[RMDB]
RNA sequence: GGGAACGACUCGAGUAGAGUCGAAAAGAUAUGGACCCAUGCUAAUCCGUAUUGUCAGCUCAAGCUGGGAUCGGAAACGAUCCCAGCUAGAGCUUGGAUUUAUACGGACAACAUGGGUCCUAAGUCAGUUCUGUUUAAUCUUCGGAUUAAACAGAACAAAAGAAACAACAACAACAAC
Reactivity to DMS in 0.01 (KOAc 150mM, MgCl2 10mM, bicine 150mM(pH8.5), 24C), signal-to-noise 1, nucleotides 027 to 126: g030a020u020a300u010g000g010a010c000c010c000a020u000g000c000u000a230a300u000c000c000g030u010a010u000u000g000u000c010a010g030c000u000c000a060a050g000c000u000g000g020g000a000u000c000g010g010a120a130a270c000g000a000u000c010c000c010a000g010c020u000a020g000a010g010c020u000u010g010g020a030u010u010u010a020u000a010c000g020g000a000c110a070a160c000a000u000g000g000g000u010c000c010u000a000a090g010u010c030a170